[RMDB]
RNA sequence: GGGAACGACUCGAGUAGAGUCGAAAACUCUCUCUGAUUCCGAUAGAGAAUCGAGAGAAAACUGGCUCUCCCUUAGCCAUCCGAGGAGGACGUUGUCCUCCUUCGGAUGCCCAGGUCGGACCGCGAGGUGAUAAGUUGUGUUCGCACAACUUAUCACAAAAGAAACAACAACAACAAC
Reactivity to DMS in 0.01 (KOAc 150mM, MgCl2 10mM, bicine 150mM(pH8.5), 24C), signal-to-noise 1, nucleotides 027 to 126: c130u000c000u000c000u000c020u030g050a000u020u000c000c020g000a230u020a180g000a060g040a010a010u000c000g010a020g000a010g000a010a030a030a110c120u060g000g000c000u010c020u000c030c070c090u000u020a040g010c150c000a010u000c000c000g020a010g010g010a010g000g020a000c000g000u000u000g020u000c020c000u000c000c000u000u000c000g030g010a000u000g020c140c060c080a120g000g020u010c050g000g000a200c030c000g010c110g020a100g010
Reactivity to 2A3 in 0.01 (KOAc 150mM, MgCl2 10mM, bicine 150mM(pH8.5), 24C), signal-to-noise 2, nucleotides 027 to 126: c010u020c000u000c000u000c080u190g000a000u000u010c010c000g170a300u170a200g280a030g000a080a000u000c000g000a010g000a010g000a030a070a000a000c030u020g020g000c000u020c000u000c030c030c030u020u090a040g040c030c010a000u000c000c000g000a000g000g000a000g000g020a010c150g300u190u290g000u030c000c000u000c010c000u020u080c000g000g000a010u000g030c000c000c000a020g020g040u000c010g000g020a020c000c010g100c080g150a080g220